[RMDB]
RNA sequence: GGGAACGACUCGAGUAGAGUCGAAAACGAUCCUCGAGAGAGGAUCGACGAGUCUUCGGACUCGAUUACCGCGCAGAUGUGCCGCGGGGCUACGAUGGUAUUGUGGGAAAGAAUACCAUUGUACCUUCUUGUCGUAGCCGAACAACUUGCACGUCGACGUAUCCUGCACUUUCGAGUGCAGGAUACGAAAAGAAACAACAACAACAAC
Reactivity to 2A3 in 0.01 (KOAc 150mM, MgCl2 10mM, bicine 150mM(pH8.5), 24C), signal-to-noise 2, nucleotides 027 to 156: c010g000a000u000c000c000u000c010g100a130g000a000g000a000g030g010a000u000c000g000a000c000g000a010g000u000c010u060u100c280g090g000a010c000u000c000g000a020u090u230a070c000c000g000c010g010c030a060g000a030u000g000u000g010c000c000g020c000g010g060g000g000c010u010a000c010g000a000u050g000g020u000a000u030u040g000u030g020g010g020a090a300a150g100a090a120u120a080c000c000a000u000u030g000u000a000c000c000u250u170c110u130u290g120u030c010g010u000a000g000c000c020g000a030a010c050a020a070c040u010u070g000c030a000c000g000u010c020g010a010